[RMDB]
RNA sequence: GGGAACGACUCGAGUAGAGUCGAAAACUAGGCAGGGUUGCUCCUCGAGGAGCAUCCACAAUGAACCGCUGUCGAGGGAGAAGAAGUAGGUUGACGAUGAAGAGUCUACGGCAGUUCAACACGAAUGGCGCCUAUCUACGUUCGCGUAGGUAGGCGCAAAAGAAACAACAACAACAAC
Reactivity to DMS in 0.01 (KOAc 150mM, MgCl2 10mM, bicine 150mM(pH8.5), 24C), signal-to-noise 2, nucleotides 027 to 126: c080u020a060g010g000c130a030g000g010g020u010u000g000c010u000c010c000u030c260g000a080g000g010a040g030c000a000u000c030c030a100c110a090a120u060g000a050a050c030c000g000c000u020g050u000c040g020a110g030g000g000a070g020a020a060g000a060a070g010u000a050g020g060u050u010g000a030c070g020a080u010g000a030a040g000a200g000u000c000u010a050c060g020g010c050a040g020u000u010c050a050a060c060a110c070g000a110a070u020g010
Reactivity to 2A3 in 0.01 (KOAc 150mM, MgCl2 10mM, bicine 150mM(pH8.5), 24C), signal-to-noise 4, nucleotides 027 to 126: c070u090a050g090g020c060a050g140g010g000u030u050g000c000u000c000c010u120c110g130a300g000g000a000g000c000a010u000c010c010a080c060a020a150u160g000a050a060c000c040g030c040u010g030u070c000g020a100g050g050g010a050g030a140a020g010a060a010g030u110a030g070g100u020u090g100a050c070g020a070u080g040a060a060g080a000g080u030c010u040a020c010g020g000c020a010g020u070u120c080a110a030c060a010c160g090a020a070u130g070